This 177-nucleotide RNA was probed chemically with DMS and 2A3.
[RMDB]
RNA sequence: GGGAACGACUCGAGUAGAGUCGAAAAUGCUAAGUGGUGCGCUCGUAAUGAGUCGAGGUUUCUGAUGGCGCGUUCCCACAAUCCUCGGCACCGGCAUCGCGCCAUUCAUAAGCCGUCGCGAAUCCGAUACCACUGACUACUUCGGUAGUCAGUGGUAAAAAGAAACAACAACAACAAC
Reactivity to DMS in 0.01 (KOAc 150mM, MgCl2 10mM, bicine 150mM(pH8.5), 24C), signal-to-noise 1, nucleotides 027 to 126: u000g010c050u000a060a130g030u010g020g020u000g020c050g020c050u010c000g000u010a100a060u020g000a030g000u000c050g020a140g000g010u000u000u000c120u000g000a030u010g020g000c010g000c030g020u020u000c020c000c000a100c190a040a120u010c040c130u000c040g000g030c030a030c050c030g010g010c080a100u000c020g020c010g010c000c010a020u010u010c080a020u000a030a080g030c020c050g010u020c050g000c120g000a100a130u000c030c010g010a230
Reactivity to 2A3 in 0.01 (KOAc 150mM, MgCl2 10mM, bicine 150mM(pH8.5), 24C), signal-to-noise 1, nucleotides 027 to 126: u110g050c060u090a170a060g130u070g070g000u050g000c000g020c010u020c020g170u210a180a100u300g010a010g020u030c000g060a020g010g010u010u130u120c120u120g040a060u000g000g040c000g000c010g010u030u030c020c060c000a020c000a000a030u040c010c050u050c000g000g000c010a000c030c000g040g000c010a030u040c000g000c000g000c010c000a020u000u030c000a010u010a050a070g000c010c050g250u150c060g000c040g050a040a080u050c030c000g020a000

For 2A3, 1,098 sequencing reads were counted. For 2A3 the reverse transcriptase was SuperScript II with manganese. For DMS, 1,491 sequencing reads were counted. DMS adducts were read by reverse transcription with MarathonRT.